[RMDB]
RNA sequence: GGGAACGACUCGAGUAGAGUCGAAAACUAUAGCAGGGGUUCUCAACCAGGGGAGAUUUUGCCACCAAGAGACAUUUGGCAAUUUUGGAAACAUUUUUGUUUGUCACAACUCAGGGAGUGCUAUUGGUACAGUUCAACAUCCUGCAAUGCAAAAGACGAUUCGAAAAGGAUUCGUCCUUUUCGAAUCAAAAGAAACAACAACAACAAC
Reactivity to 2A3 in 0.01 (KOAc 150mM, MgCl2 10mM, bicine 150mM(pH8.5), 24C), signal-to-noise 3, nucleotides 027 to 156: c020u040a020u120a220g020c010a030g040g020g010g000u060u030c000u010c030a030a050c020c020a020g010g030g010g000a050g020a020u050u050u060u150g000c010c010a040c010c020a100a000g080a010g060a060c030a090u160u120u110g010g000c030a020a020u040u040u070u120g070g030a080a060a010c040a110u090u100u080u130u120g070u050u050u060g030u020c020a000c010a160a180c040u070c070a030g010g050g010a040g010u050g030c020u110a100u120u020g000g010u060a030c020a050g010u030u070c030a050a020c010a060u050c000c010u010g010c030a040a090u080g010c030a030a030a010a140g140a030c120
Reactivity to DMS in 0.01 (KOAc 150mM, MgCl2 10mM, bicine 150mM(pH8.5), 24C), signal-to-noise 1, nucleotides 027 to 156: c050u010a150u020a110g000c040a080g010g020g000g020u010u010c050u000c030a090a140c020c040a120g010g000g030g020a150g030a120u000u000u000u000g010c030c030a040c080c080a090a110g000a180g040a120c050a110u010u000u000g100g030c040a070a080u000u000u000u000g020g000a240a090a060c050a100u000u000u010u000u010g080u020u020u000g010u000c020a050c090a080a050c030u010c070a140g010g030g030a070g020u000g020c000u000a060u000u010g070g060u010a040c040a030g000u010u020c000a040a050c100a030u000c040c050u020g000c060a060a080u010g020c060a060a030a060a180g000a150c220